[RMDB]
RNA sequence: GGGAACGACUCGAGUAGAGUCGAAAAGAUAUGGACUCCCGAUGCAGCAACAGCGUGAGGGCUCGGAAACGAGCCUCACGACAUGCUGGGCAGGGAGUCCUAAGUCAAAUCCCCUCUUCGGAGGGGACGGAGAACUAGUCUUCGGACUAGUUCUCCGAAAAGAAACAACAACAACAAC
Reactivity to DMS in 0.01 (KOAc 150mM, MgCl2 10mM, bicine 150mM(pH8.5), 24C), signal-to-noise 1, nucleotides 027 to 126: g030a020u000a300u000g000g030a030c000u000c000c010c000g040a300u070g040c010a010g040c060a040a060c250a240g000c020g000u010g000a040g030g000g000c000u000c000g030g000a010a020a300c000g000a020g020c020c000u000c000a010c000g020a130c070a200u000g020c000u020g000g000g010c200a300g000g010g000a050g010u000c000c010u000a010a060g020u020c060a110a110a280u020c000c000c000c000u000c030u050u000c220g020g020a050g030g010g000g040a020